[RMDB]
Overview: Structure probing data (DMS and 2A3) for a 177-nucleotide construct. The DMS profile rests on 22,770 reads. Conditions: 150 mM KOAc, 10 mM MgCl2 and 150 mM bicine (pH 8.5), 24 C. For 2A3 the reverse transcriptase was SuperScript II with manganese. The 2A3 profile rests on 16,835 reads. For DMS the reverse transcriptase was MarathonRT. It was measured as part of the RMDB library OK2TST.

RNA sequence: GGGAACGACUCGAGUAGAGUCGAAAAAUGAAGCGUUGCGCGUGGAGCUGAAUCGCUAUUCAUUAAAAGUGCAAGGAUUGCUGGGACGUCGCUGCCCAACGCCAAUGUUAUCAGGCUACUGGAAGAAUAACAUGCCUAAAUUCGUUUAGGCAUGUUAAAAAGAAACAACAACAACAAC
Reactivity to DMS in 0.01 (KOAc 150mM, MgCl2 10mM, bicine 150mM(pH8.5), 24C), signal-to-noise 9, nucleotides 027 to 126: a070u000g000a060a050g010c030g020u000u000g010c150g020c030g020u010g000g010a160g010c030u010g010a090a060u010c060g020c030u000a100u000u000c050a060u000u000a060a070a110a100g010u000g010c080a080a110g000g010a080u000u000g010c030u000g010g000g010a100c080g000u010c100g000c060u000g010c020c010c020a050a050c080g010c020c020a040a060u000g000u000u000a100u000c070a060g000g010c070u000a060c080u000g000g000a090a090g000a100a130
Reactivity to 2A3 in 0.01 (KOAc 150mM, MgCl2 10mM, bicine 150mM(pH8.5), 24C), signal-to-noise 9, nucleotides 027 to 126: a000u070g010a020a010g030c010g030u040u060g030c040g000c010g060u060g070g090a060g010c040u070g040a040a050u050c010g020c040u070a120u060u060c040a020u030u190a070a080a030a030g120u090g050c050a050a050g070g020a100u050u100g030c030u080g030g010g010a020c030g060u080c040g020c070u090g040c000c010c010a020a010c020g000c000c010a010a020u090g030u060u040a110u110c020a030g040g030c030u040a030c030u080g070g060a060a030g030a110a050